[RMDB]
RNA sequence: GGGAACGACUCGAGUAGAGUCGAAAAGAAAAAGAGGCAUGUUUGCAAACUGAGAAGAGGGUUACAAACGACCCCCUGGCUCAUUUCCUCUCCGCCGCAGACAAAGUGACCCCAUCUAAAAAUCACAGUAGUUUUACCGAUUCGUCGGUAAAACUACAAAAGAAACAACAACAACAAC
Reactivity to DMS in 0.01 (KOAc 150mM, MgCl2 10mM, bicine 150mM(pH8.5), 24C), signal-to-noise 1, nucleotides 027 to 126: g010a090a000a120a140a050g000a000g020g010c160a050u040g000u000u000u110g000c000a050a170a070c090u000g000a030g040a120a020g000a070g010g000g000u000u020a100c230a170a230a120c300g000a000c030c030c000c030c000u000g000g000c010u020c000a060u000u000u010c020c020u000c000u000c060c050g000c030c010g060c050a040g000a030c200a040a040a170g000u030g000a040c010c020c000c030a040u000c080u000a020a000a030a030a030u010c070a000c120a100
Reactivity to 2A3 in 0.01 (KOAc 150mM, MgCl2 10mM, bicine 150mM(pH8.5), 24C), signal-to-noise 3, nucleotides 027 to 126: g020a010a090a040a030a040g040a040g030g050c060a050u160g040u170u120u060g050c030a050a050a070c050u060g020a010g040a040a030g020a100g020g000g050u030u020a040c100a130a200a020c110g050a020c000c000c010c000c000u010g130g000c000u020c000a040u040u050u040c000c000u000c000u050c050c000g000c000c000g000c020a000g010a030c020a030a150a040g080u030g030a050c010c000c000c000a000u050c030u170a120a120a000a060a010u110c050a070c040a110